Annotation:
The record gives the reactivity of an RNA of 177 nucleotides to DMS and 2A3. For DMS the reverse transcriptase was MarathonRT. It was measured as part of the RMDB libraries RFM100 and RFMREP. Conditions: 150 mM KOAc, 10 mM MgCl2 and 150 mM bicine (pH 8.5), 24 C.
RNA sequence: GGGAACGACUCGAGUAGAGUCGAAAAUUAAGUUCUUUGGCGGGUUAGAUGAAUCUAAUCCAUGGUCAUCCACUUUAUAAAUACAUAAAAGGACAGUUUUAUGAUUGUCAGCUUUGAGUUGAGGAUACAGCGUACUGUAAUUCGUUACAGUACGCUGAAAAGAAACAACAACAACAAC
Reactivity to DMS in 0.01 (KOAc 150mM, MgCl2 10mM, bicine 150mM(pH8.5), 24C), signal-to-noise 2, nucleotides 027 to 126: u030u040a040a070g000u010u000c010u000u010u010g020g030c070g010g010g010u010u010a010g000a060u010g000a160a050u000c000u000a010a020u000c000c020a080u040g050g000u000c030a030u010c050c020a100c080u010u020u040a100u020a100a050a040u020a070c040a080u010a080a040a030a050g020g000a030c030a040g000u000u010u010u030a080u030g000a020u000u010g020u000c010a100g000c030u000u000u000g000a200g000u000u000g010a120g000g010a080u010a180
Reactivity to 2A3 in 0.01 (KOAc 150mM, MgCl2 10mM, bicine 150mM(pH8.5), 24C), signal-to-noise 3, nucleotides 027 to 126: u070u030a040a030g030u000u050c000u090u070u080g040g010c030g020g000g010u000u000a000g030a050u080g230a170a210u040c000u000a000a020u000c020c000a060u090g080g000u010c000a010u010c000c040a060c070u060u210u060a170u070a100a180a050u200a010c070a000u130a060a040a000a000g060g000a000c000a000g000u000u060u030u110a190u230g050a020u020u020g020u010c040a060g120c120u020u020u060g050a060g010u010u020g110a060g080g000a020u030a080